[RMDB]
RNA sequence: GGGAACGACUCGAGUAGAGUCGAAAAGUCUCACGAGUGCAAAGACAAAGGUAGUUGACUCCGGCGCUACCAGUACUCGAAUGAAUGCGAAAGAGUUCAUGUAUUCCAACCGGAGAAGAACUCAAAAACCCAUUAUCCCUUUCGAGGGAUAAUGGGUAAAAGAAACAACAACAACAAC
Reactivity to 2A3 in 0.01 (KOAc 150mM, MgCl2 10mM, bicine 150mM(pH8.5), 24C), signal-to-noise 4, nucleotides 027 to 126: g040u000c000u000c010a020c000g010a000g010u040g000c030a150a180a150g050a190c070a030a180a020g020g000u010a000g000u040u200g020a040c000u010c000c010g000g000c000g000c000u000a000c000c010a020g010u010a000c000u000c020g010a010a020u110g040a060a030u180g060c120g050a050a130a130g030a020g010u020u000c080a090u200g090u170a160u160u180c080c040a060a030c000c010g000g000a010g000a000a000g010a000a000c010u000c010a020a030a020a020
Reactivity to DMS in 0.01 (KOAc 150mM, MgCl2 10mM, bicine 150mM(pH8.5), 24C), signal-to-noise 3, nucleotides 027 to 126: g000u010c030u020c010a210c030g000a010g000u000g000c010a160a150a120g000a180c300a090a110a180g030g010u000a040g020u020u030g000a180c000u010c000c010g000g000c090g000c000u010a000c000c000a150g010u000a000c000u000c000g000a100a050u060g000a110a100u060g010c070g010a030a110a080g000a020g000u000u020c010a160u050g000u020a060u000u030c130c180a160a160c010c000g030g010a000g000a240a150g000a010a010c000u000c010a050a080a120a110
Structure probing data (2A3 and DMS) for a 177-nucleotide construct. The reactions ran in a buffer of 150 mM KOAc, 10 mM MgCl2 and 150 mM bicine (pH 8.5), at 24 C. DMS adducts were read by reverse transcription with MarathonRT. High DMS reactivity at an A or C suggests that its Watson-Crick edge is free. Source: RMDB library OK1LIB, as collected in RNAgym. 2A3 adducts were read by reverse transcription with SuperScript II with manganese. The 2A3 profile rests on 3,480 reads.